[RMDB]
The record gives the reactivity of an RNA of 177 nucleotides to 2A3 and DMS. Values cover nucleotides 27 to 126. For 2A3, 2,136 sequencing reads were counted.

RNA sequence: GGGAACGACUCGAGUAGAGUCGAAAAGAUCCCGCGACACUACUAGAAGCCUAAAGUUCGCGGUUGGCCCUACUAAUCGGCAUCGCACCCCGCCGGACCUCCCCCCAUCAACGGCUGUCACAGUCUGCAUAGUAUUGGUGUUCGCACCAAUACUAUGAAAAGAAACAACAACAACAAC
Reactivity to 2A3 in 0.01 (KOAc 150mM, MgCl2 10mM, bicine 150mM(pH8.5), 24C), signal-to-noise 2, nucleotides 027 to 126: g040a060u140c000c030c010g010c000g000a050c060a010c090u150a040c030u070a040g040a200a030g120c030c040u130a140a130a020g030u040u050c040g000c020g030g000u030u130g120g020c020c000c000u010a060c010u030a040a150u090c020g000g000c030a030u080c050g050c070a130c020c010c020c010g030c010c000g000g030a060c010c010u010c000c000c000c000c000c000a010u000c000a000a010c020g000g000c000u010g030u090c010a030c020a120g040u060c020u040g040
Reactivity to DMS in 0.01 (KOAc 150mM, MgCl2 10mM, bicine 150mM(pH8.5), 24C), signal-to-noise 4, nucleotides 027 to 126: g000a100u010c060c010c010g020c020g010a040c150a050c030u010a130c100u010a120g010a170a130g010c050c020u000a050a100a080g010u000u000c030g010c030g010g010u010u000g010g000c020c010c020u010a100c140u020a100a090u000c070g020g020c020a070u010c110g020c060a110c050c050c040c080g000c030c030g010g010a200c010c000u000c020c000c000c010c000c020a060u000c070a060a100c130g010g000c010u000g000u000c110a080c080a070g020u000c020u010g030